[RMDB]
The data come from the RNA Mapping Database (RMDB), library RNAMAK. The record gives the reactivity of an RNA of 207 nucleotides to 2A3. The reactions ran in a buffer of 150 mM KOAc, 10 mM MgCl2 and 150 mM bicine (pH 8.5), at 24 C.
RNA sequence: GGGAACGACUCGAGUAGAGUCGAAAAAACCCGCUUCGGCGGGUUGAGGAGGGGUCGAUUUAACCACCUCUUGGAUUUAUACUGAAGCCUCCACGGUAUUGUCAGAGGGUGGUGAUGAUCGACGGAGGCACCCACGGUUUUAGCGUUCGCGCUAAAAUAAUGACAUGAGGUUCGCCUCAUGUCAUUAAAAAGAAACAACAACAACAAC
Reactivity to 2A3 in 0.01 (KOAc 150mM, MgCl2 10mM, bicine 150mM(pH8.5), 24C), signal-to-noise 1, nucleotides 027 to 156: a000a000c020c000c000g000c020u070u020c130g130g000c000g000g030g070u000u000g020a020g000g040a130g000g020g020g030u000c010g000a010u000u000u150a030a000c000c000a000c000c040u120c000u060u040g060g000a030u070u300u120a010u060a010c010u030g070a110a090g070c010c040u050c010c040a040c010g000g020u000a020u040u200g040u030c060a040g040a110g170g000g030u020g000g000u020g040a100u300g000a040u000c010g000a000c000g040g030a030g030g030c050a110c000c020c030a020c030g020g000u030u000u000u020a000g010c010g020u060u040c300g020c000g000c170u010a000a020a000a000